[RMDB]
RNA sequence: GGGAACGACUCGAGUAGAGUCGAAAAGAUAUGGAACACUUGCGAUAAGCUGCAGUCGGAAACGACUGGCAGCUUUUGACGCUUGUGUUCCUAAGUCAAAAGCCGAAGCAGUUCGCUGCUUCGGCAACUCAACUAUGCAGUUCGCUGCAUAGUUGAGAAAAGAAACAACAACAACAAC
Reactivity to DMS in 0.01 (KOAc 150mM, MgCl2 10mM, bicine 150mM(pH8.5), 24C), signal-to-noise 2, nucleotides 027 to 126: g000a020u000a100u000g000g000a010a010c000a010c000u000u000g010c000g040a150u000a040a020g040c000u000g000c020a030g000u000c000g000g000a040a010a040c000g010a000c000u000g010g030c010a010g010c000u000u000u000u000g000a150c040g010c000u010u000g000u000g000u000u000c000c000u000a000a050g000u000c000a080a090a160a160g000c000c000g000a010a010g020c010a000g000u010u000c190g010c000u000g000c000u010u000c000g000g000c000a000a010
Reactivity to 2A3 in 0.01 (KOAc 150mM, MgCl2 10mM, bicine 150mM(pH8.5), 24C), signal-to-noise 1, nucleotides 027 to 126: g000a010u000a000u050g010g020a000a020c000a010c010u020u030g000c020g170a250u060a300a040g010c010u050g000c010a010g020u000c000g000g020a070a010a010c000g020a000c020u000g090g000c020a010g040c020u010u000u030u060g040a000c000g010c010u000u020g010u000g000u000u000c010c000u000a000a000g030u000c000a030a000a000a260g000c010c000g000a000a000g000c000a010g030u060u200c250g090c190u000g000c010u000u000c010g000g000c010a000a010
This 177-nucleotide RNA was probed chemically with DMS and 2A3. Conditions: 150 mM KOAc, 10 mM MgCl2 and 150 mM bicine (pH 8.5), 24 C. The 2A3 profile rests on 2,679 reads. Source: RMDB library TTRDEL, as collected in RNAgym. The DMS profile rests on 2,493 reads.